This 207-nucleotide RNA was probed chemically with 2A3 and DMS. The RNA was probed in 150 mM KOAc, 10 mM MgCl2 and 150 mM bicine (pH 8.5) at 24 C. DMS (dimethyl sulfate) methylates the pairing face of unpaired adenines and cytosines. Reactivities are given for positions 27 through 156.
[RMDB]
RNA sequence: GGGAACGACUCGAGUAGAGUCGAAAAACGGUGCGGAAGUUCGCGCUUCCGUGAAACGCGAAAAUCGGACGGUGGCUGCAAGUCGCAUCGCAAAACCGCGGCAGGUGGAGUUAGCGAGAGGAGGCUGAAACCAUCCAACACUUCGGUGUUGGAUGAACAACAUGGAGAACUUCGGUUCUCCAUGUUGAAAAGAAACAACAACAACAAC
Reactivity to 2A3 in 0.01 (KOAc 150mM, MgCl2 10mM, bicine 150mM(pH8.5), 24C), signal-to-noise 2, nucleotides 027 to 156: a000c030g020g000u050g000c010g010g010a040a010g040u080u160c080g000c030g010c070u040u010c010c000g020u030g030a100a090a000c120g010c010g090a070a030a010a100u110c020g000g020a010c020g010g050u010g010g040c070u100g050c070a060a000g020u060c030g010c050a050u040c010g000c030a010a080a050a010c060c020g030c000g020g010c060a040g000g040u060g010g030a070g010u070u060a000g020c020g030a030g000a040g070g010a030g000g040c020u000g000a050a060a020c040c000a000u000c000c000a000a000c000a000c020u050u090c210g120g010u000g000u000u000g000g010a000u010g010a000a020
Reactivity to DMS in 0.01 (KOAc 150mM, MgCl2 10mM, bicine 150mM(pH8.5), 24C), signal-to-noise 2, nucleotides 027 to 156: a060c020g030g030u000g010c030g000g010a030a050g000u000u000c190g070c220g010c000u000u000c000c090g040u020g010a030a050a060c000g000c020g000a060a020a100a130u000c050g000g010a080c000g010g000u000g010g030c020u000g040c050a060a070g020u010c040g000c000a130u000c030g070c040a040a040a100a120c000c070g020c040g030g030c060a050g000g030u000g000g000a110g000u000u020a110g000c090g000a080g020a070g020g040a060g000g000c020u000g040a080a060a130c070c000a030u000c010c000a000a010c000a010c000u000u010c300g060g020u010g000u000u010g000g010a000u000g000a010a110